[RMDB]
RNA sequence: GGGAACGACUCGAGUAGAGUCGAAAACUAUGAGCGCUCAGUACGGCCUCGGUACUCUGGCCGUCAGUCUCGGCCGUGCGUACGUACGCUAUGCGCGCGUACUGGAUCUAUAUAGCGCACGAUGCGGCGGUUCUGGUAUAUUCGUAUACCAGAACCGAAAAGAAACAACAACAACAAC
Reactivity to 2A3 in 0.01 (KOAc 150mM, MgCl2 10mM, bicine 150mM(pH8.5), 24C), signal-to-noise 5, nucleotides 027 to 126: c040u070a170u280g070a050g040c030g010c020u030c120a050g050u130a010c010g000g010c020c030u050c080g030g020u150a130c090u060c060u130g010g000c000c000g030u020c030a010g030u000c020u000c060g050g020c010c010g060u020g000c020g030u070a090c050g020u010a000c030g040c030u060a100u180g060c040g010c000g000c000g030u010a010c010u060g040g020a040u010c070u090a140u030a050u100a240g000c010g000c000a000c020g060a090u170g060c050g060g010
Reactivity to DMS in 0.01 (KOAc 150mM, MgCl2 10mM, bicine 150mM(pH8.5), 24C), signal-to-noise 4, nucleotides 027 to 126: c030u010a070u010g020a090g000c050g020c020u000c120a090g020u010a010c020g010g000c010c010u000c070g000g020u000a060c110u020c060u000g020g010c000c010g030u000c060a090g000u000c070u000c060g000g000c050c010g010u010g000c050g020u000a040c080g010u000a090c050g010c050u000a080u010g010c070g000c040g010c000g010u000a010c010u000g010g000a090u010c100u010a110u000a110u010a090g000c010g030c000a060c060g010a090u000g000c070g000g010
Conditions: 150 mM KOAc, 10 mM MgCl2 and 150 mM bicine (pH 8.5), 24 C. Chemical mapping of a 177-nucleotide RNA with 2A3 and DMS. It was measured as part of the RMDB library OK2TRN. Values cover nucleotides 27 to 126. For 2A3, 6,088 sequencing reads were counted.